[RMDB]
RNA sequence: GGGAACGACUCGAGUAGAGUCGAAAAGGCGUCUUCGCUGCCUCGGCCGCCCUGCACUGACCGGUAGCCGCCGUAAUAGCGGCAUUGUUCCCAUAAAUGGAUGUGGGUGUGGGUGUCGAAGUAGCAGGGUAUCGCAUAUAUUCGUAUAUGCGAUACCAAAAGAAACAACAACAACAAC
Reactivity to DMS in 0.01 (KOAc 150mM, MgCl2 10mM, bicine 150mM(pH8.5), 24C), signal-to-noise 4, nucleotides 027 to 126: g010g000c120g010u000c050u000u010c120g020c020u000g000c020c030u000c010g030g000c020c070g020c070c020c010u000g020c000a010c020u010g000a090c020c050g010g020u000a140g000c010c000g050c000c040g020u000a140a080u010a100g010c010g010g000c000a070u010u010g010u000u000c010c010c010a140u010a040a090a160u000g010g010a100u010g020u000g000g010g020u000g020u000g010g000g010u000g020u010c010g010a030a030g010u000a040g010c020a140g030
Reactivity to 2A3 in 0.01 (KOAc 150mM, MgCl2 10mM, bicine 150mM(pH8.5), 24C), signal-to-noise 4, nucleotides 027 to 126: g120g040c070g080u040c070u140u090c100g010c010u010g000c000c010u010c010g000g000c020c040g070c020c010c020u020g020c010a020c010u050g170a040c010c030g050g010u040a030g020c000c000g000c010c000g030u050a060a060u130a130g000c000g020g010c000a020u030u220g030u050u020c010c000c000a020u170a040a140a050u210g060g040a050u110g040u100g150g000g000u030g020u030g020g010g020u040g010u020c010g010a040a000g000u020a010g000c010a020g040